RNA sequence: GGGAACGACUCGAGUAGAGUCGAAAAACGCUGCCGACCUUGGCCCGGGCCUCGGUGACCUGGGUCAGGACCGACGCCUCAUGGGAGGCAUAGCCCUUCACCGUGCUGACCAGGUUGGGCACCAGGACGUGAGGAGGAUGUUCGCAUCCUCCUCACGAAAAGAAACAACAACAACAAC
Reactivity to DMS in 0.01 (KOAc 150mM, MgCl2 10mM, bicine 150mM(pH8.5), 24C), signal-to-noise 1, nucleotides 027 to 126: a170c120g020c090u000g060c020c020g010a050c040c020u000u030g010g000c030c000c020g010g000g020c020c010u000c240g030g000u000g020a040c010c030u000g030g020g000u000c020a000g000g010a040c060c000g020a070c130g000c010c010u000c070a170u000g020g000g000a110g010g010c000a090u010a050g000c010c000c030u000u000c050a080c060c030g010u000g000c040u000g020a130c010c020a100g010g080u000u000g030g000g030c060a140c100c060a040g020g040a190
Reactivity to 2A3 in 0.01 (KOAc 150mM, MgCl2 10mM, bicine 150mM(pH8.5), 24C), signal-to-noise 1, nucleotides 027 to 126: a000c030g040c080u110g060c040c010g030a060c000c010u020u030g010g010c000c010c000g030g020g000c000c020u140c020g020g020u060g020a090c010c030u000g010g000g040u020c010a020g030g040a020c060c090g090a070c120g020c010c020u060c010a090u110g220g150g000a000g010g000c000a020u110a030g020c000c000c060u040u010c030a030c020c000g080u020g000c100u100g040a080c010c010a020g080g000u020u030g100g010g000c030a010c000c040a020g080g030a010
The record gives the reactivity of an RNA of 177 nucleotides to DMS and 2A3.
The reactions ran in a buffer of 150 mM KOAc, 10 mM MgCl2 and 150 mM bicine (pH 8.5), at 24 C.
The DMS profile rests on 1,000 reads.
The 2A3 profile rests on 1,182 reads.